[RMDB]
RNA sequence: GGGAACGACUCGAGUAGAGUCGAAAAAUCGGCGGCCAUUCCGACGUGGUGGGAGGUGCGCUGGUCACCAACGACGAAGAGCUGGACGAGGAGUUCGCUUUCUUGCAGAACGGCGCCGGCGCGGUGCUGCCUUUCUUAUCUUCGGAUAAGAAAGGCAAAAAGAAACAACAACAACAAC
Reactivity to DMS in 0.01 (KOAc 150mM, MgCl2 10mM, bicine 150mM(pH8.5), 24C), signal-to-noise 4, nucleotides 027 to 126: a080u000c040g020g020c030g010g000c040c040a190u000u010c020c000g020a130c120g020u010g010g010u000g000g010g010a110g000g020u000g020c040g010c050u010g010g000u010c040a120c030c020a100a110c070g020a190c130g010a090a050g000a080g010c020u000g020g010a080c020g010a110g000g000a260g010u010u000c040g000c030u000u000u000c100u010u010g020c060a120g010a070a060c060g010g020c150g000c040c030g020g000c090g010c080g010g000u000g010c140
Reactivity to 2A3 in 0.01 (KOAc 150mM, MgCl2 10mM, bicine 150mM(pH8.5), 24C), signal-to-noise 2, nucleotides 027 to 126: a000u030c020g000g000c020g020g020c010c020a140u100u030c010c040g060a070c120g140u120g060g050u080g040g010g000a030g030g010u160g080c050g000c030u030g000g070u060c030a040c020c020a030a080c060g110a020c040g040a060a070g000a040g080c100u160g010g040a030c010g020a020g170g030a060g060u030u020c000g000c010u070u080u020c040u030u080g050c050a020g040a150a030c050g030g000c030g020c010c030g000g000c040g000c040g030g040u100g010c040
An RNA of 177 nucleotides, treated with DMS and 2A3 and read out base by base. Values cover nucleotides 27 to 126. The data come from the RNA Mapping Database (RMDB), library OK2TST. Conditions: 150 mM KOAc, 10 mM MgCl2 and 150 mM bicine (pH 8.5), 24 C. DMS adducts were read by reverse transcription with MarathonRT.